An RNA of 177 nucleotides, treated with DMS and read out base by base.
DMS adducts were read by reverse transcription with MarathonRT.
For DMS, 852 sequencing reads were counted.
In probing experiments dimethyl sulfate is read out at A N1 and C N3, which are open when not base-paired.

RNA sequence: GGGAACGACUCGAGUAGAGUCGAAAAGAUAUGGACGUGGUCCGAUAAGCUGGUGUCGGAAACGACAUACAGCUUUUGACGGCCACGUCCUAAGUCAAACAGAACGAAUGUUCGCAUUCGUUCUGAAGCAUAUUGGCGGGUUCGCCCGCCAAUAUGCAAAAGAAACAACAACAACAAC
Reactivity to DMS in 0.01 (KOAc 150mM, MgCl2 10mM, bicine 150mM(pH8.5), 24C), signal-to-noise 2, nucleotides 027 to 126: g000a000u000a280u000g000g010a000c010g040u000g000g020u010c010c000g020a130u000a010a000g070c010u000g000g010u010g020u000c000g030g000a090a060a180c000g010a000c000a030u000a080c030a000g000c000u000u020u000u000g040a300c300g000g020c020c030a000c030g000u000c000c000u000a010a090g010u000c080a060a050a300c000a030g000a020a000c020g020a000a000u000g030u000u000c200g030c000a010u000u000c010g010u000u010c030u020g000a040a100